This 177-nucleotide RNA was probed chemically with 2A3. For 2A3, 651 sequencing reads were counted. The reactions ran in a buffer of 150 mM KOAc, 10 mM MgCl2 and 150 mM bicine (pH 8.5), at 24 C. Reactivities are rounded to 0.1 and cut off at 0 and 3.
[RMDB]
RNA sequence: GGGAACGACUCGAGUAGAGUCGAAAAAUGGCCUCCUGACGGAUGCGCGUGUCCUUACUCCGUUUUGGUGGGUGGGUGGCUGUGUAUGGCGUCCCAUCUGUGCGGGGAGGGGGCAAGUCGGCACGUACAUCGGGGGAUCGUUCGCGAUCCCCCGAUGAAAAGAAACAACAACAACAAC
Reactivity to 2A3 in 0.01 (KOAc 150mM, MgCl2 10mM, bicine 150mM(pH8.5), 24C), signal-to-noise 2, nucleotides 027 to 126: a020u060g010g020c040c000u000c010c030u030g010a000c010g010g010a140u000g010c020g000c000g120u090g130u080c000c000u000u050a010c020u000c000c000g070u060u050u150u300g290g060u190g090g000g030u150g000g060g070u100g020g000c020u040g060u020g040u180a250u300g030g010c000g000u010c000c000c000a010u000c030u080g180u020g020c100g000g050g020g080a120g010g080g000g040g000c050a000a070g090u160c160g030g000c010a040c030g070u040a040